The record gives the reactivity of an RNA of 170 nucleotides to DMS and 2A3. 2A3 adducts were read by reverse transcription with SuperScript II with manganese. The RNA was probed in 150 mM KOAc, 10 mM MgCl2 and 150 mM bicine (pH 8.5) at 24 C.
RNA sequence: GGGAACGACUCGAGUAGAGUCGAAAAUUGUGUGGGAGGCUGGCAAGUCCAAACCACCACUCAAUCGUAAUUAUGUUUUUACUGGUUAUCAUAUAACCAAAAAUAGUAAAGUGCAGCUCGGUGAGUAGAAGCCCUAGGUUCGCCUAGGGCAAAAGAAACAACAACAACAAC
Reactivity to DMS in 0.01 (KOAc 150mM, MgCl2 10mM, bicine 150mM(pH8.5), 24C), signal-to-noise 4, nucleotides 027 to 129: u020u020g010u000g010u000g010g050g000a190g000g000c120u010g040g040c000a140a150g040u080c020c000a000a040a130c000c020a170c020c010a010c030u010c000a070a030u000c200g020u000a060a090u020u010a080u050g020u000u000u020u010u070a090c120u010g030g000u000u000a030u070c230a100u000a300u030a020a000c000c000a020a070a030a060a070u050a120g040u000a040a010a070g020u000g000c010a010g040c030u020c030g040g000u040g010a070g050u000a030g010a080a100
Reactivity to 2A3 in 0.01 (KOAc 150mM, MgCl2 10mM, bicine 150mM(pH8.5), 24C), signal-to-noise 7, nucleotides 027 to 129: u030u010g000u000g010u000g000g020g000a190g010g030c020u010g000g000c080a170a080g080u070c000c000a030a010a070c010c000a000c000c000a000c000u040c020a010a030u050c050g060u080a120a090u170u140a170u110g170u050u050u020u030u040a070c060u040g030g000u010u010a000u060c170a040u100a030u080a250a050c010c020a010a030a010a050a050u090a020g010u050a040a030a030g040u050g000c000a010g010c010u040c050g020g010u080g030a020g000u080a020g040a070a020